This 207-nucleotide RNA was probed chemically with 2A3. 2A3 is a SHAPE reagent: it acylates the 2'-hydroxyl of flexible nucleotides of all four kinds. For 2A3, 957 sequencing reads were counted. Values cover nucleotides 27 to 156. The RNA was probed in 150 mM KOAc, 10 mM MgCl2 and 150 mM bicine (pH 8.5) at 24 C.

[RMDB]
RNA sequence: GGGAACGACUCGAGUAGAGUCGAAAAGUCGCGCAGCAACUACGAGGCCCUGGUGCGGGGUGGCGCGAACGCCGUGCACCGUUUCGGCGAGACGUUCGUGCCGCGCACCCGCGACGGCGAGGUGCACGUGAUCGCCACCAAGGCCAGCCAGUUCGCCCCACUGGAGAACUUUCGAGUUCUCCAGUGGAAAAGAAACAACAACAACAAC
Reactivity to 2A3 in 0.01 (KOAc 150mM, MgCl2 10mM, bicine 150mM(pH8.5), 24C), signal-to-noise 1, nucleotides 027 to 156: g110u110c030g000c000g000c160a020g020c000a050a040c010u110a060c100g060a060g020g000c030c000c000u010g030g040u070g020c000g000g000g070g000u030g000g000c010g000c000g010a000a000c000g000c030c010g050u100g040c030a040c050c030g040u110u120u100c180g030g000c050g040a080g010a160c020g000u000u000c000g020u030g020c020c000g000c010g000c020a140c000c010c000g000c000g050a070c030g000g000c000g000a030g010g000u010g000c010a010c120g090u090g050a050u130c020g010c040c020a010c020c010a020a000g000g010c020c000a000g030c010c000a000g000u040u040c040g040c000c020